[RMDB]
RNA sequence: GGGAACGACUCGAGUAGAGUCGAAAAAUCCUGCCCUUCGGGGCAGGAUGCAGCUUCGCUCUUGAGAGCGCGAGUUAAGAGGAAUCCCAACGCGCAGAAGCACUAUUUCUCAGUUCGCUGAGAAAAAAACAUAUGAACAUUUCGAUGUUCAUAUGUUAAAAGAAACAACAACAACAAC
Reactivity to 2A3 in 0.01 (KOAc 150mM, MgCl2 10mM, bicine 150mM(pH8.5), 24C), signal-to-noise 8, nucleotides 027 to 126: a000u000c000c010u000g000c000c000c010u020u050c290g030g000g010g010c000a000g000g000a000u000g000c010a010g010c010u020u020c000g020c010u020c020u260u300g180a290g000a020g280c020g030c090g020a010g010u070u030a080a020g110a030g180g100a050a080u010c010c000c010a020a030c070g040c010g000c060a060g070a230a030g070c020a030c060u130a190u070u040u010c010u000c000a020g030u050u080c160g020c080u000g000a000g000a010a000a000a000a000
Reactivity to DMS in 0.01 (KOAc 150mM, MgCl2 10mM, bicine 150mM(pH8.5), 24C), signal-to-noise 7, nucleotides 027 to 126: a040u000c000c000u000g010c000c000c000u000u000c210g030g020g010g010c000a000g000g000a000u000g010c090a250g010c040u000u000c010g010c020u000c020u010u010g010a140g020a030g010c010g010c140g000a070g000u000u000a100a220g010a100g010g000a110a140u000c000c000c020a100a140c140g020c050g000c050a070g000a090a070g010c040a090c170u010a110u000u000u000c010u000c000a010g000u000u010c200g010c000u000g000a020g000a000a000a030a090a090
Record summary:
The record gives the reactivity of an RNA of 177 nucleotides to 2A3 and DMS. Source: RMDB library M2PK50, as collected in RNAgym. The 2A3 profile rests on 14,638 reads.